[RMDB]
RNA sequence: GGGAACGACUCGAGUAGAGUCGAAAAAUUGCAACCAAUAAAGGAAUUAGUUUGGUGACUAUUGUUUCAGAUACUCUUAAAUCGGCAGAAACUACUGCUGAAUGGGAAAUGAAACUAUCUGAUAUUGCGUGGUAAUAAUCUUCGGAUUAUUACCACGAAAAGAAACAACAACAACAAC
Reactivity to DMS in 0.01 (KOAc 150mM, MgCl2 10mM, bicine 150mM(pH8.5), 24C), signal-to-noise 5, nucleotides 027 to 126: a040u030u010g020c150a080a070c150c030a030a010u020a020a060a280g000g010a050a070u010u000a020g010u000u000u020g000g000u020g000a060c060u000a050u010u010g000u000u010u000c000a020g010a170u020a180c080u000c000u000u010a030a090a090u000c000g010g020c000a000g020a090a130a110c260u040a100c010u000g000c000u000g000a020a050u000g000g000g010a050a110a160u000g010a010a000a010c120u010a030u000c010u010g000a200u000a010u000u000g020
Reactivity to 2A3 in 0.01 (KOAc 150mM, MgCl2 10mM, bicine 150mM(pH8.5), 24C), signal-to-noise 7, nucleotides 027 to 126: a000u160u190g050c050a030a060c000c000a030a030u100a070a080a020g150g030a080a120u110u040a080g120u050u090u110g160g010u130g040a040c010u050a050u140u130g030u020u000u000c000a010g020a050u120a240c020u000c000u020u160a130a210a160u030c000g000g000c010a010g040a030a200a080c190u300a110c010u040g000c000u000g000a050a070u050g000g010g010a050a090a080u030g010a020a010a000c010u020a040u030c060u080g110a120u060a090u140u150g070